[RMDB]
This 207-nucleotide RNA was probed chemically with DMS and 2A3. Values cover nucleotides 27 to 156. In probing experiments dimethyl sulfate is read out at A N1 and C N3, which are open when not base-paired. The RNA was probed in 150 mM KOAc, 10 mM MgCl2 and 150 mM bicine (pH 8.5) at 24 C.
RNA sequence: GGGAACGACUCGAGUAGAGUCGAAAAGUAUAGAAGCAUGAGACCGCAUGCGGUAUACGAUGAAUCACGGUCGAAUCCGUUGUGCGAAAGCACUUCGGUAAUGCAUAUCGGUAGACAGAUCCGCCCGGAUCAGCUACCGUAAUUAGUACGGGCAAGAAUGCAGUGACCUAUUCGUAGGUCACUGCAUAAAAGAAACAACAACAACAAC
Reactivity to DMS in 0.01 (KOAc 150mM, MgCl2 10mM, bicine 150mM(pH8.5), 24C), signal-to-noise 1, nucleotides 027 to 156: g000u000a080u000a100g050a300a130g000c010a030u000g000a160g020a110c000c000g000c120a100u000g000c020g000g020u000a060u000a040c050g000a130u000g040a140a140u000c070a030c000g000g020u010c000g000a100a200u000c000c020g040u000u000g040u010g000c040g020a090a150a300g010c000a000c000u000u000c000g030g000u000a030a050u000g000c020a170u020a140u000c000g020g000u020a070g050a020c080a190g010a040u000c000c000g050c060c140c170g030g000a100u000c000a160g020c010u020a000c000c000g010u000a000a120u000u020a120g030u000a010c060g020g010g020c030a120a170g020a130
Reactivity to 2A3 in 0.01 (KOAc 150mM, MgCl2 10mM, bicine 150mM(pH8.5), 24C), signal-to-noise 2, nucleotides 027 to 156: g070u060a010u060a160g050a160a040g010c010a010u050g000a010g000a120c000c020g000c010a030u160g100c030g050g060u150a060u060a130c080g020a060u170g110a120a090u140c070a030c050g010g010u000c010g030a030a030u000c000c000g010u000u000g010u000g010c020g070a090a010a000g000c000a000c000u000u030c000g000g000u070a030a020u100g000c020a000u110a030u150c020g000g000u000a000g060a130c060a080g000a000u000c010c020g010c010c000c000g010g000a000u000c010a000g000c000u000a000c000c000g000u020a020a020u040u040a010g110u040a020c030g000g000g030c020a020a000g050a090